[RMDB]
RNA sequence: GGGAACGACUCGAGUAGAGUCGAAAAGUUGGGAAAAGCGAUUCGCUUUACGAGUCGCAGAGCACGACGAAUCCAUUCUUGUACUUAAAACCAGAUUUGAUCAGGUAUGGAAUUGGUUUUCAGCUGCCUUGGUCACACUGUUCGCAGUGUGACCAAGAAAAGAAACAACAACAACAAC
Reactivity to 2A3 in 0.01 (KOAc 150mM, MgCl2 10mM, bicine 150mM(pH8.5), 24C), signal-to-noise 2, nucleotides 027 to 126: g060u010u010g010g150g000a000a000a000a180g000c000g000a000u020u020c040g040c140u060u030u140a120c110g000a000g000u020c010g000c000a030g000a030g000c030a010c080g110a000c040g000a040a050u000c000c000a010u020u020c020u080u100g080u000a060c040u070u070a050a050a290a260c070c040a060g050a300u060u020u170g180a130u090c080a050g070g010u020a020u070g000g020a000a000u070u130g060g060u030u000u010u190c050a000g070c010u030g050c000
Reactivity to DMS in 0.01 (KOAc 150mM, MgCl2 10mM, bicine 150mM(pH8.5), 24C), signal-to-noise 1, nucleotides 027 to 126: g040u010u000g020g030g000a010a140a240a080g000c000g030a010u000u000c000g010c300u130u050u020a080c040g000a040g000u000c050g260c000a110g010a000g000c070a120c130g000a050c080g050a020a010u010c000c030a050u000u000c000u000u010g000u000a080c040u000u000a010a080a120a180c210c140a010g000a070u010u000u010g000a120u060c180a030g000g000u000a030u030g000g000a000a040u000u030g000g000u080u000u000u000c000a090g000c100u000g000c000
The record gives the reactivity of an RNA of 177 nucleotides to 2A3 and DMS.
The DMS profile rests on 1,347 reads.